[RMDB]
RNA sequence: GGGAACGACUCGAGUAGAGUCGAAAAUACUUAGCCGAGGAGUCAGUGAGUGAAAUUUCUGCAUAUACUGAUGUUGUUCAUCCAGACUUAACGUGCUUUACAUUUUCUUCUGGAAUGAAAAGUGCAAUAAUGGAUUACCGUUCGCGGUAAUCCAUUAAAAAGAAACAACAACAACAAC
Reactivity to DMS in 0.01 (KOAc 150mM, MgCl2 10mM, bicine 150mM(pH8.5), 24C), signal-to-noise 2, nucleotides 027 to 126: u000a090c060u000u000a110g040c030c010g020a100g020g060a130g020u000c020a020g020u000g010a090g020u010g010a040a070a160u000u000u010c070u010g010c040a060u010a170u010a040c060u000g010a090u010g020u000u000g020u000u000c030a090u000c020c040a150g010a080c190u010u010a040a080c170g020u010g010c060u000u000u000a060c000a030u000u030u000u000c080u020u020c300u020g000g020a050a030u010g000a030a020a020a030g030u000g000c030a060a160